[RMDB]
RNA sequence: GGGAACGACUCGAGUAGAGUCGAAAAAGUACAUUCUUCUGAUCAUCUGCAGAUCAGCAAUUAGAAAAGAAAGAUCAGCUACCUCCUUGGGACCUGAUCAUAACACAGGAGCUACCGAUUUCAACUACUCCGGCCUAACUCUCUCCUAAACAAUGAACAUACUACAGUAGUUCGCUACUGUAGUAUGAAAAGAAACAACAACAACAAC
Reactivity to 2A3 in 0.01 (KOAc 150mM, MgCl2 10mM, bicine 150mM(pH8.5), 24C), signal-to-noise 9, nucleotides 027 to 156: a000g080u080a040c040a100u070u030c020u070u000c000u030g010a020u010c000a040u020c050u170g070c090a030g010a020u030c010a000g010c010a020a200u220u160a080g080a060a080a030a010g080a050a090a000g010a010u010c000a000g000c020u090a100c000c000u100c050c130u180u200g020g000g020a030c010c000u000g010a010u000c000a010u060a050a030c100a000c030a050g040g040a020g030c030u080a040c030c030g070a050u030u100u100c030a040a020c010u050a010c010u020c020c010g080g000c020c010u040a050a030c000u010c000u000c000u010c030c010u040a060a070a040c050a040a110u120g010a040a000
Reactivity to DMS in 0.01 (KOAc 150mM, MgCl2 10mM, bicine 150mM(pH8.5), 24C), signal-to-noise 4, nucleotides 027 to 156: a080g020u000a090c090a110u000u000c030u000u000c010u000g000a050u000c010a200u010c090u000g020c140a280g010a030u010c000a030g010c200a060a100u020u010a120g010a100a090a110a130g020a120a160a160g010a050u000c020a040g020c020u000a300c030c020u000c190c170u000u000g020g010g010a180c300c010u010g020a030u000c020a080u000a090a100c060a160c070a090g010g020a070g010c030u000a080c070c020g010a180u000u000u010c060a040a100c020u010a040c010u000c000c000g010g030c030c020u010a040a080c050u000c020u010c020u010c000c010u000a040a070a050c070a050a100u010g000a110a200